[RMDB]
The record gives the reactivity of an RNA of 177 nucleotides to DMS and 2A3.
RNA sequence: GGGAACGACUCGAGUAGAGUCGAAAACGUCCUAGUUUCGACUAGGACGAAAUAAAAUCAGCGGUAAAUAAUCGAGGCGUAUUACCGCAGAACGCCUCGAUAAAAUGCGAUGAUUCGUCAUCGCAAAACAUCUACACUCCUUCGGGAGUGUAGAUGUAAAAGAAACAACAACAACAAC
Reactivity to DMS in 0.01 (KOAc 150mM, MgCl2 10mM, bicine 150mM(pH8.5), 24C), signal-to-noise 1, nucleotides 027 to 126: c020g020u000c000c010u040a020g000u000u020u000c150g020a030c000u000a000g010g010a010c000g020a000a050a050u010a060a020a080a090u000c120a030g000c050g000g050u000a080a150a220u000a140a040u000c010g000a010g010g000c040g010u020a200u010u000a200c020c060g000c000a120g010a150a000c010g000c000c040u000c020g000a010u000a000a010a080a070u000g010c000g000a030u000g000a010u000u020c120g000u010c000a010u000c000g010c000a040a010a090
Reactivity to 2A3 in 0.01 (KOAc 150mM, MgCl2 10mM, bicine 150mM(pH8.5), 24C), signal-to-noise 1, nucleotides 027 to 126: c000g000u030c000c010u010a000g000u010u090u010c220g090a010c000u010a000g000g020a000c000g010a030a000a000u080a000a040a000a050u070c020a030g060c000g060g000u060a060a090a090u160a080a080u090c000g000a000g000g000c000g000u010a070u060u220a050c030c030g020c010a000g040a040a000c000g000c000c000u000c020g000a000u000a000a080a000a010u040g010c020g000a000u020g000a010u020u060c100g050u000c050a010u000c000g000c000a030a000a000

The 2A3 profile rests on 1,908 reads. The DMS profile rests on 1,107 reads. Values cover nucleotides 27 to 126. The data come from the RNA Mapping Database (RMDB), library M2PK50. DMS adducts were read by reverse transcription with MarathonRT.